Chemical mapping of a 177-nucleotide RNA with DMS and 2A3. The RNA was probed in 150 mM KOAc, 10 mM MgCl2 and 150 mM bicine (pH 8.5) at 24 C. DMS adducts were read by reverse transcription with MarathonRT. It was measured as part of the RMDB library OK2TST. For 2A3, 804 sequencing reads were counted. For DMS, 867 sequencing reads were counted.
RNA sequence: GGGAACGACUCGAGUAGAGUCGAAAAACUUAAAACUUCCAGAAGCCGAAAUAGAUACAUCAACUUACUCUGUCAAAUACUGGAAAAUAAUUCAGUGCAUAUCAUGCAUAGGUCUCCUUCCUAUGAGACCGUUACAUCGAUUCGUCGAUGUAACGGUAAAAGAAACAACAACAACAAC
Reactivity to DMS in 0.01 (KOAc 150mM, MgCl2 10mM, bicine 150mM(pH8.5), 24C), signal-to-noise 2, nucleotides 027 to 126: a160c040u020u010a030a070a100a130c170u000u000c000c010a110g000a220a150g000c130c080g020a050a090a070u010a050g010a060u000a070c080a080u000c080a080a080c040u000u000a080c120u000c020u010g000u000c020a030a080a110u010a080c010u000g000g030a000a010a070a150u010a060a130u000u000c080a000g000u000g010c030a030u010a040u000c110a040u000g040c000a060u000a040g030g000u020c060u010c040c090u000u000c030c000u010a030u010g000a070g000
Reactivity to 2A3 in 0.01 (KOAc 150mM, MgCl2 10mM, bicine 150mM(pH8.5), 24C), signal-to-noise 1, nucleotides 027 to 126: a000c040u050u010a090a120a020a220c040u020u050c040c000a060g080a200a000g040c080c050g080a040a030a050u070a040g050a020u070a110c040a090u110c040a060a020c000u010u040a070c040u030c010u040g060u060c020a090a070a090u100a140c020u000g030g000a010a020a060a060u250a070a120u110u020c040a000g020u000g030c030a040u040a070u240c040a070u100g000c010a000u020a040g030g000u020c040u010c040c010u070u000c030c000u070a090u070g050a040g040